[RMDB]
RNA sequence: GGGAACGACUCGAGUAGAGUCGAAAAAACGCCCUAGCGGUUGUCGCGGUGACCCCGCUGUUGACGCCGUGGCUGAGCAAGCAGCUCGCACUUGGUCCACGGCCAGACAUUCUGGCCGGCGCGGGAGGUAUGCAUUACGUUUCGACGUAAUGCAUACAAAAGAAACAACAACAACAAC
Reactivity to 2A3 in 0.01 (KOAc 150mM, MgCl2 10mM, bicine 150mM(pH8.5), 24C), signal-to-noise 2, nucleotides 027 to 126: a000a050c060g050c030c000c000u040a040g010c030g060g000u120u170g030u260c030g000c030g050g030u090g120a240c000c010c000c010g020c040u030g030u080u150g010a010c000g000c020c000g010u040g030g000c040u050g000a020g030c060a170a060g030c000a030g080c070u080c070g000c020a060c030u040u090g050g020u100c040c000a040c000g000g000c000c000a010g010a040c050a110u250u050c010u000g000g000c000c020g030g010c010g050c020g010g050g020a020g140
Reactivity to DMS in 0.01 (KOAc 150mM, MgCl2 10mM, bicine 150mM(pH8.5), 24C), signal-to-noise 4, nucleotides 027 to 126: a040a080c220g010c000c010c090u000a150g010c020g010g010u000u010g030u000c030g000c020g010g010u000g010a240c080c040c010c020g000c010u000g020u000u010g040a070c090g000c010c020g010u000g000g010c030u010g020a030g000c090a070a090g000c070a110g010c080u000c110g020c030a130c060u010u000g010g010u010c020c040a110c030g000g010c000c000a020g000a140c220a170u010u010c010u000g010g000c000c010g010g000c080g010c120g000g000g000a120g000